[RMDB]
RNA sequence: GGGAACGACUCGAGUAGAGUCGAAAAGCCACGGACCGAGAUGAAGUUCGCAUUGGUCUCGUUGGCGACGGCUUUCGCCAUCAGAGUCUUGCCGGUGCCCGGCGGGCCGUAGAGCAAGACGCCGGCCCCCGGUCAUGAUGUUCGCAUCAUGACCGGGAAAAGAAACAACAACAACAAC
Reactivity to DMS in 0.01 (KOAc 150mM, MgCl2 10mM, bicine 150mM(pH8.5), 24C), signal-to-noise 1, nucleotides 027 to 126: g010c010c010a030c040g040g000a040c010c020g000a110g010a100u000g010a110a230g000u000u010c100g030c160a220u010u010g000g010u010c010u000c040g060u010u000g010g000c020g000a080c050g010g000c010u000u010u010c080g030c020c030a090u010c090a140g010a100g010u010c010u020u000g030c000c000g010g010u030g010c070c010c020g010g030c070g010g000g020c000c010g000u000a080g030a160g020c050a050a040g010a060c050g000c020c000g000g000c040c080
Reactivity to 2A3 in 0.01 (KOAc 150mM, MgCl2 10mM, bicine 150mM(pH8.5), 24C), signal-to-noise 2, nucleotides 027 to 126: g000c010c020a010c000g020g000a000c000c020g030a080g000a180u100g090a130a140g300u280u270c110g050c060a050u020u140g000g010u040c070u090c180g050u090u080g000g030c010g020a050c020g030g010c000u010u160u190c080g000c080c020a060u140c080a060g030a020g090u020c000u070u060g070c000c000g000g080u140g000c010c010c000g060g070c030g000g010g020c000c000g040u090a030g040a030g190c030a020a030g070a080c040g000c010c010g030g030c000c000
The data come from the RNA Mapping Database (RMDB), library OK2TST.
This 177-nucleotide RNA was probed chemically with DMS and 2A3.
For 2A3 the reverse transcriptase was SuperScript II with manganese.
Reactivities are rounded to 0.1 and cut off at 0 and 3.
The reactions ran in a buffer of 150 mM KOAc, 10 mM MgCl2 and 150 mM bicine (pH 8.5), at 24 C.
For DMS, 1,270 sequencing reads were counted.